The record gives the reactivity of an RNA of 177 nucleotides to DMS. The data come from the RNA Mapping Database (RMDB), library TTRINS. DMS adducts were read by reverse transcription with MarathonRT. The RNA was probed in 150 mM KOAc, 10 mM MgCl2 and 150 mM bicine (pH 8.5) at 24 C.
[RMDB]
RNA sequence: GGGAACGACUCGAGUAGAGUCGAAAAGAUAUGGAGGCUAACAGCGACCUAUAAUCUCAGAACUACCAAAGAGAUCGGAAACGAUCUAACUUUGGCUGAGGUAGGUCGCUGUUAGCCUCCUAAGUCACUUAUCAAAGAGCUUCGGCUCUUUGAUAAGAAAAGAAACAACAACAACAAC
Reactivity to DMS in 0.01 (KOAc 150mM, MgCl2 10mM, bicine 150mM(pH8.5), 24C), signal-to-noise 1, nucleotides 027 to 126: g010a020u000a300u010g010g000a010g010g000c010u000a000a000c000a010g020c000g000a010c000c000u000a060u010a300a100u000c010u010c000a010g000a080a060c160u030a300c050c000a020a010a030g010a030g000a010u000c000g000g000a110a120a160c000g020a010u000c000u000a150a070c000u000u000u000g000g010c020u000g000a000g010g000u000a000g010g020u000c000g000c000u000g030u000u000a000g020c000c000u000c000c010u000a000a050g010u000c040a290